[RMDB]
RNA sequence: GGGAACGACUCGAGUAGAGUCGAAAAGCGAAGGGAACAGGGAUUUUUGCUGCUAAAAACAAAGCCGUCUUCGCGGCCACCCAUCCAGGCACCAGUUCUGGAACCUCGGCCAGCCAUGAAGCUUUGGCCUCCCUACCUCAUUCGUGAGGUAGGGAGGAAAAGAAACAACAACAACAAC
Reactivity to 2A3 in 0.01 (KOAc 150mM, MgCl2 10mM, bicine 150mM(pH8.5), 24C), signal-to-noise 4, nucleotides 027 to 126: g030c040g020a070a000g060g090g080a090a030c140a200g120g050g080a210u140u140u080u100u060g070c090u040g020c070u140a130a080a000a030a030c090a050a040a010g050c000c010g050u060c010u060u000c000g000c000g010g000c000c000a020c000c000c000a020u000c000c010a010g000g010c010a070c050c120a100g060u150u030c010u000g020g030a030a130c000c010u060c010g000g020c010c000a010g030c000c000a100u190g060a150a000g010c010u080u050u000g080g020
Reactivity to DMS in 0.01 (KOAc 150mM, MgCl2 10mM, bicine 150mM(pH8.5), 24C), signal-to-noise 2, nucleotides 027 to 126: g050c000g020a060a010g000g000g040a020a160c080a130g030g000g030a120u000u000u000u000u050g000c140u010g000c110u010a020a080a160a040a050c090a140a060a070g000c000c000g000u000c000u000u000c040g010c050g020g000c090c100a050c090c020c020a070u000c000c030a010g000g020c080a250c150c180a080g000u030u010c010u010g000g000a030a050c080c010u000c120g010g010c000c020a070g000c050c160a050u120g030a170a070g000c010u000u040u000g000g000